[RMDB]
An RNA of 177 nucleotides, treated with 2A3 and read out base by base.
RNA sequence: GGGAACGACUCGAGUAGAGUCGAAAACAGCACUAUCGACGGUUAUGUCCAUGGGUCUGGCUGGAAUGUACUACAUGGCUCAGGCGCACAUCAAGGCUUACGCUAUGCAGGAUGGUCGGGACCGUGAAACGUAGGCCUCGUUCGCGAGGCCUACGUUAAAAGAAACAACAACAACAAC
Reactivity to 2A3 in 0.01 (KOAc 150mM, MgCl2 10mM, bicine 150mM(pH8.5), 24C), signal-to-noise 2, nucleotides 027 to 126: c180a090g120c030a000c060u080a000u150c000g060a060c060g070g010u220u000a080u070g060u000c010c000a030u020g000g000g000u020c000u000g010g120c000u000g000g070a120a000u240g060u110a000c040u010a050c000a140u040g030g010c000u120c220a080g000g000c000g000c030a050c040a130u180c110a100a000g150g000c000u000u030a060c010g000c000u050a000u070g020c000a010g040g140a170u080g000g000u000c000g000g000g150a080c040c140g000u000g060a250

Reactivities are given for positions 27 through 126. The data come from the RNA Mapping Database (RMDB), library OK1LIB. 2A3 adducts were read by reverse transcription with SuperScript II with manganese.